[RMDB]
The record gives the reactivity of an RNA of 177 nucleotides to 2A3 and DMS. For DMS, 684 sequencing reads were counted. The RNA was probed in 150 mM KOAc, 10 mM MgCl2 and 150 mM bicine (pH 8.5) at 24 C. Source: RMDB library M2PK50, as collected in RNAgym. For DMS the reverse transcriptase was MarathonRT.

RNA sequence: GGGAACGACUCGAGUAGAGUCGAAAAGAGGAUGACUUCGGUCAUCCUCAAAUAAGGAAACCUGCGUGGUGCCGAGAGUAAAUGCAAACACGCCAAACACAAAAAGUGAAUUCUUCGGAAUUCACAACACAGCUUAUUUCUUCGGAAAUAAGCUGUGAAAAGAAACAACAACAACAAC
Reactivity to 2A3 in 0.01 (KOAc 150mM, MgCl2 10mM, bicine 150mM(pH8.5), 24C), signal-to-noise 1, nucleotides 027 to 126: g010a000g000g000a010u000g000a020c000u050u050c180g040g000u000c000a020u020c000c000u020c000a000a000a000u010a000a000g080g010a090a050a050c010c010u010g000c010g020u010g000g070u030g080c020c100g090a090g010a010g110u230a100a080a090u150g000c020a060a070a020c000a020c000g040c040c070a100a120a000c040a010c020a080a200a000a000a000g000u000g000a000a010u000u030c000u020u050c190g000g030a010a000u000u040c030a000c000a020a000
Reactivity to DMS in 0.01 (KOAc 150mM, MgCl2 10mM, bicine 150mM(pH8.5), 24C), signal-to-noise 1, nucleotides 027 to 126: g000a040g010g000a020u000g020a010c010u000u000c200g020g000u000c000a000u000c000c000u000c030a020a080a080u000a220a210g010g010a130a050a110c020c000u000g000c020g000u010g020g030u000g030c030c100g030a060g010a090g040u000a020a120a150u000g000c010a030a100a020c060a030c060g000c000c210a030a060a060c140a070c290a050a070a050a040a190g000u000g020a000a000u000u000c000u000u000c120g030g010a030a000u000u000c000a000c000a100a190